[RMDB]
RNA sequence: GGGAACGACUCGAGUAGAGUCGAAAAAUUGCUGCAGGUAAUACAAUUGUGAUUCAACCUUCGUCUUCAACACCAUUAAGUUUAUUGGAAGUUGCUAAAAUUUUCCAAGAGGUAUUACCUAAAGGUGUAGGACUGAGUUAUUCGUAACUCAGUCCUAAAAAGAAACAACAACAACAAC
Reactivity to 2A3 in 0.01 (KOAc 150mM, MgCl2 10mM, bicine 150mM(pH8.5), 24C), signal-to-noise 4, nucleotides 027 to 126: a000u130u160g040c010u050g040c010a010g010g000u000a010a000u000a010c020a020a090u050u090g050u130g120a090u030u020c040a080a040c020c010u080u080c030g140u050c060u120u040c060a030a060c080a030c110c000a030u060u180a150a090g090u090u060u100a070u050u080g020g010a050a030g010u020u020g040c020u110a040a070a150a230u110u190u130u030c030c010a020a020g010a020g300g000u000a000u000u030a000c010c000u010a070a030a000g040g000u080g060
Reactivity to DMS in 0.01 (KOAc 150mM, MgCl2 10mM, bicine 150mM(pH8.5), 24C), signal-to-noise 3, nucleotides 027 to 126: a050u010u020g000c000u000g020c300a000g020g030u000a010a000u000a000c000a090a080u030u010g020u010g010a080u050u020c060a080a070c090c010u010u030c110g000u000c050u000u000c070a070a080c080a070c040c050a080u040u000a070a110g010u010u010u000a090u020u020g000g010a030a030g020u010u000g000c160u060a020a080a020a050u000u020u030u010c020c000a010a020g000a140g010g000u000a010u000u010a000c010c000u010a040a090a060g000g030u000g000